This 177-nucleotide RNA was probed chemically with DMS. The reactions ran in a buffer of 150 mM KOAc, 10 mM MgCl2 and 150 mM bicine (pH 8.5), at 24 C. Source: RMDB library OK2TST, as collected in RNAgym. For DMS, 467 sequencing reads were counted.
RNA sequence: GGGAACGACUCGAGUAGAGUCGAAAAAAUUUGUACCUUUGUUUGUGGUCACCAUGUCCCAAGCAGUACCAUAUUGGCGGCAGACCAUGCAGGCACGCAAUCAAAAUGGUAAAAAGCAAAAGAACCGCAUGCCCAAAGUUUUCGAACUUUGGGCAUGAAAAGAAACAACAACAACAAC
Reactivity to DMS in 0.01 (KOAc 150mM, MgCl2 10mM, bicine 150mM(pH8.5), 24C), signal-to-noise 1, nucleotides 027 to 126: a070a080u000u000u010g020u000a160c070c010u000u000u000g000u010u000u010g020u000g000g010u000c040a050c090c000a100u020g000u000c010c000c010a150a100g000c020a170g040u000a020c040c000a070u000a090u010u000g000g030c300g020g040c020a130g020a120c030c010a100u000g030c160a120g000g020c010a120c150g010c010a010a020u020c110a060a030a120a030u000g020g010u020a090a100a000a060a060g000c000a070a040a050a090g000a110a070c140c110g030